This 177-nucleotide RNA was probed chemically with DMS and 2A3. It was measured as part of the RMDB library OK1LIB. For DMS, 1,717 sequencing reads were counted. The reactions ran in a buffer of 150 mM KOAc, 10 mM MgCl2 and 150 mM bicine (pH 8.5), at 24 C. DMS adducts were read by reverse transcription with MarathonRT.
[RMDB]
RNA sequence: GGGAACGACUCGAGUAGAGUCGAAAAAUGCCGCAAUAUCAUUCACGGCUUCCGGGCACAUCGAUCCAUGGGGAAAUAGCGGCGGUACGCUCAAAGGGAACCUGCCGCUUACGCUGAAUGAGAGUUCGACGCUAGUCGGAUUCGUCCGACUAGCGUCAAAAGAAACAACAACAACAAC
Reactivity to DMS in 0.01 (KOAc 150mM, MgCl2 10mM, bicine 150mM(pH8.5), 24C), signal-to-noise 2, nucleotides 027 to 126: a010u050g000c020c050g070c050a130a020u030a070u010c090a000u050u010c040a090c000g000g040c040u000u040c010c050g000g010g020c100a070c130a090u030c100g010a070u050c050c000a100u000g000g000g000g000a030a070a080u040a000g000c000g000g030c000g050g020u000a020c170g000c070u000c300a110a200a120g020g000g000a050a040c020c000u050g020c010c000g000c000u020u150a010c090g050c220u000g000a130a010u000g000a040g010a140g020u000u000c010
Reactivity to 2A3 in 0.01 (KOAc 150mM, MgCl2 10mM, bicine 150mM(pH8.5), 24C), signal-to-noise 5, nucleotides 027 to 126: a000u160g030c020c000g080c070a070a080u100a080u180c040a050u050u030c010a020c050g010g020c070u050u010c020c020g040g010g000c040a080c020a270u140c130g050a040u070c060c040a130u130g010g000g000g070a060a100a050u130a020g000c000g000g000c080g010g000u090a040c110g050c040u130c170a100a210a080g080g020g000a020a050c000c030u120g000c010c010g000c000u010u000a010c010g040c070u050g040a040a040u040g010a030g010a010g110u090u190c070